RNA sequence: GGGAACGACUCGAGUAGAGUCGAAAAUGAGGGGACUAAGUGGAGGCCUGAAGCCGGGUUAUGAUGCAGGGUCCUGGGCCUGAGACCCCAGGCUUCUUCCCUUAGGUGUGAGUCAUGGAAGAGGGUCAAUCCUGCCCGUAUUCGUACGGGCAGGAUUAAAAGAAACAACAACAACAAC
Reactivity to DMS in 0.01 (KOAc 150mM, MgCl2 10mM, bicine 150mM(pH8.5), 24C), signal-to-noise 1, nucleotides 027 to 126: u000g000a050g030g000g000g000a250c110u010a050a050g030u010g010g010a020g000g000c150c100u000g000a050a090g020c050c070g000g020g000u000u070a030u020g000a180u000g010c060a040g000g000g010u020c040c040u070g050g000g040c010c000u010g020a100g010a040c100c000c010c040a040g030g010c050u000u000c010u000u000c030c000c020u010u010a060g000g000u020g010u020g030a110g000u020c080a070u020g040g010a030a000g000a100g010g000g000u000c080
Reactivity to 2A3 in 0.01 (KOAc 150mM, MgCl2 10mM, bicine 150mM(pH8.5), 24C), signal-to-noise 1, nucleotides 027 to 126: u110g040a080g070g000g010g000a010c020u120a090a120g030u070g170g000a030g060g050c000c030u020g100a080a000g030c040c020g000g000g000u130u140a070u300g210a100u150g060c020a090g000g040g020u030c000c000u030g010g110g000c060c000u140g010a120g000a040c000c000c020c000a030g000g000c000u070u000c000u000u010c000c000c000u000u050a010g000g000u040g000u030g070a050g000u070c080a080u050g030g110a050a040g050a110g040g000g000u050c070
An RNA of 177 nucleotides, treated with DMS and 2A3 and read out base by base. The DMS profile rests on 2,285 reads. Conditions: 150 mM KOAc, 10 mM MgCl2 and 150 mM bicine (pH 8.5), 24 C.